Annotation:
Chemical mapping of a 207-nucleotide RNA with 2A3 and DMS. For 2A3, 1,623 sequencing reads were counted. Source: RMDB library RFM130, as collected in RNAgym. For DMS, 22,418 sequencing reads were counted. Conditions: 150 mM KOAc, 10 mM MgCl2 and 150 mM bicine (pH 8.5), 24 C.
RNA sequence: GGGAACGACUCGAGUAGAGUCGAAAAGAAUUCCCUGAAUGUGACGCAAAUCACUUCAAAGAGUGAGCAACAGUCAGUAUCAUCAUGUGAGUUAAACCCUCGCCGCCUGACGGUGAGGGUUUUCUUUUGGGUCAGGUAGCAUAUUCGUAUGCUACAAAUGUAUAAUAGUGUUCGCACUAUUAUACAUAAAAGAAACAACAACAACAAC
Reactivity to 2A3 in 0.01 (KOAc 150mM, MgCl2 10mM, bicine 150mM(pH8.5), 24C), signal-to-noise 2, nucleotides 027 to 156: g070a020a100u040u010c010c000c030u010g040a030a030u120g010u020g020a010c000g000c130a030a090a070u000c020a020c020u020u030c080a090a150a000g120a000g000u040g020a030g040c030a030a070c020a030g030u000c020a010g020u110a040u110c010a030u030c040a060u110g060u020g060a040g010u040u060a010a020a010c000c000c010u000c000g000c000c000g010c030c060u090g020a070c000g000g000u000g000a000g020g050g000u020u000u000u000c010u020u110u040u010g010g010g000u080c050a040g040g020u010a010g020c010a010u000a000u030u040c120g060u020a000u020g000c000u000a000c000a000a050
Reactivity to DMS in 0.01 (KOAc 150mM, MgCl2 10mM, bicine 150mM(pH8.5), 24C), signal-to-noise 6, nucleotides 027 to 156: g020a150a240u000u000c000c000c010u010g010a080a090u010g030u000g010a040c020g000c080a090a240a160u000c000a010c010u000u000c050a190a240a170g000a000g010u000g010a040g000c040a120a050c050a150g030u000c020a080g010u010a090u000c070a130u010c110a130u000g020u010g010a080g000u000u000a050a030a040c000c010c000u000c010g020c000c000g020c040c160u000g010a110c030g010g030u000g000a010g010g000g000u000u000u000u000c010u000u000u000u010g010g020g020u000c090a180g020g020u000a010g000c000a030u000a050u000u010c300g020u000a010u000g000c000u000a000c010a020a060